The record gives the reactivity of an RNA of 177 nucleotides to DMS and 2A3.
The RNA was probed in 150 mM KOAc, 10 mM MgCl2 and 150 mM bicine (pH 8.5) at 24 C.
For DMS the reverse transcriptase was MarathonRT.
RNA sequence: GGGAACGACUCGAGUAGAGUCGAAAACGCGCGAACGUAAAUUAUAUUGCGCGAAGCACGUGCGGAAAGGGCCCGAAACGCACGUGCGAAAUAACGCCGGGCCCGCAAUAUAAUUUACGGAAGCGCGGCGGUUUUAUAAGUUCGCUUAUAAAACCGCAAAAGAAACAACAACAACAAC
Reactivity to DMS in 0.01 (KOAc 150mM, MgCl2 10mM, bicine 150mM(pH8.5), 24C), signal-to-noise 1, nucleotides 027 to 126: c000g000c000g000c000g000a190a140c010g000u000a000a000a010u000u000a000u020a020u000u000g000c000g070c000g050a160a100g010c000a010c000g020u000g020c000g020g010a140a050a020g000g000g000c000c000c000g010a090a280a090c030g000c000a000c020g000u000g020c010g000a000a090a090u050a140a120c030g010c020c000g000g120g000c060c000c010g000c000a000a000u010a000u000a000a000u000u000u000a000c000g000g000a060a220g000c000g000c000g000
Reactivity to 2A3 in 0.01 (KOAc 150mM, MgCl2 10mM, bicine 150mM(pH8.5), 24C), signal-to-noise 5, nucleotides 027 to 126: c000g020c000g000c000g050a170a000c000g010u000a000a000a000u000u000a000u000a000u000u000g000c010g000c010g020a020a000g010c000a000c000g010u010g000c010g090g110a100a060a050g030g010g000c000c000c000g020a290a300a010c020g000c010a000c000g000u000g000c000g010a000a000a040u170a180a060c020g000c000c000g000g000g010c000c000c000g000c000a000a000u000a000u000a000a000u000u000u000a000c000g000g000a010a000g000c000g000c000g000
Notes
It was measured as part of the RMDB library OK1LIB.